[RMDB]
Structure probing data (2A3) for a 207-nucleotide construct.

RNA sequence: GGGAACGACUCGAGUAGAGUCGAAAAAUCACCGGUGGGGAACCCCAUACGGCAACGACGUAGAAGUAAAUGCUAACCAAUCCGUGGUAUCUACGCGACGGAGCAUCCACGGAUAACUCUAACAAGGCUAAGCGUCUCGGUUUCGACCGAGACGCAACACAGAGUUAGCGUUCGCGCUAACUCUGUGAAAAGAAACAACAACAACAAC
Reactivity to 2A3 in 0.01 (KOAc 150mM, MgCl2 10mM, bicine 150mM(pH8.5), 24C), signal-to-noise 1, nucleotides 027 to 156: a000u050c040a030c040c020g010g020u040g000g010g030g040a110a110c060c060c000c010a050u100a180c010g020g020c040a070a020c010g090a000c020g010u020a010g000a080a010g000u070a000a030a030u080g000c090u120a010a010c000c040a070a080u000c000c000g000u000g000g020u020a000u050c040u050a060c080g010c000g070a050c110g010g080a010g020c000a000u040c000c000a000c000g010g000a000u020a000a010c040u000c020u140a080a080c060a160a030g120g000c050u120a060a120g000c000g020u000c020u000c000g000g060u110u070u090c200g160a020c000c000g000a000g030a000c000g020c000a000a000